[RMDB]
RNA sequence: GGGAACGACUCGAGUAGAGUCGAAAAUGAGAAUACUUUUAGUACAAGCGAGUACACGCAGUAUAGUGCCACUUGUGUGAGAAUACUUUUAGUACAAGCGAGUACACGCUCUAUACUGCCACUUGUGGCUGAGGAGCACAUUCGUGUGCUCCUCAGCAAAAGAAACAACAACAACAAC
Reactivity to DMS in 0.01 (KOAc 150mM, MgCl2 10mM, bicine 150mM(pH8.5), 24C), signal-to-noise 2, nucleotides 027 to 126: u030g000a100g000a130a060u000a060c070u000u000u000u000a090g000u000a090c110a140a080g000c110g030a080g000u000a060c230a170c300g030c030a000g000u060a060u000a000g000u000g000c070c100a080c000u000u020g000u000g020u060g000a100g000a150a130u060a000c060u000u000u000u000a140g070u000a060c000a000a300g000c060g000a060g000u000a060c060a130c300g010c050u060c010u000a000u000a000c000u020g060c000c040a000c020u000u020g000u000g000
Reactivity to 2A3 in 0.01 (KOAc 150mM, MgCl2 10mM, bicine 150mM(pH8.5), 24C), signal-to-noise 4, nucleotides 027 to 126: u160g030a040g130a070a080u130a120c080u110u080u120u180a120g040u100a060c050a050a030g020c030g010a030g010u070a080c030a000c060g000c010a000g000u000a000u000a010g000u010g030c000c000a020c000u040u020g000u010g050u020g090a120g060a130a030u060a050c030u060u170u130u210a090g020u010a020c020a020a040g010c010g010a010g010u070a050c060a010c040g000c000u000c000u010a000u000a000c010u020g010c000c000a030c010u020u020g020u030g070